RNA sequence: GGGAACGACUCGAGUAGAGUCGAAAACCUGAUGAGCCCAUGGCAGGGCGAAACCAAUGUGGUACGGUAUGGCAAGGCUUGCCUCGGAGCCAAGCGGGAGGGCUCCCAGGGCGUCGCACGGGCGCAGUGCUGCGCGAGACUCUAGGCCCGUGACAUGGCCAAACAAAGAGUUCGCUCUUUGUUUGGCAAAAGAAACAACAACAACAAC
Reactivity to 2A3 in 0.01 (KOAc 150mM, MgCl2 10mM, bicine 150mM(pH8.5), 24C), signal-to-noise 1, nucleotides 027 to 156: c020c000u060g060a110u070g050a000g020c020c040c020a090u110g090g000c080a040g010g040g000c020g030a100a030a000c030c020a070a150u170g030u110g070g020u060a030c060g010g060u150a080u060g040g000c040a000a070g000g030c050u040u140g050c030c020u000c000g000g000a020g000c000c000a060a050g010c020g000g000g000a030g010g030g000c000u000c000c010c000a020g010g030g010c020g040u060c050g000c000a000c050g050g000g000c100g000c080a030g000u020g050c020u070g040c040g000c030g030a030g020a050c020u060c040u150a020g090g020c030c000c000g010u010g040a030c030a060u140g080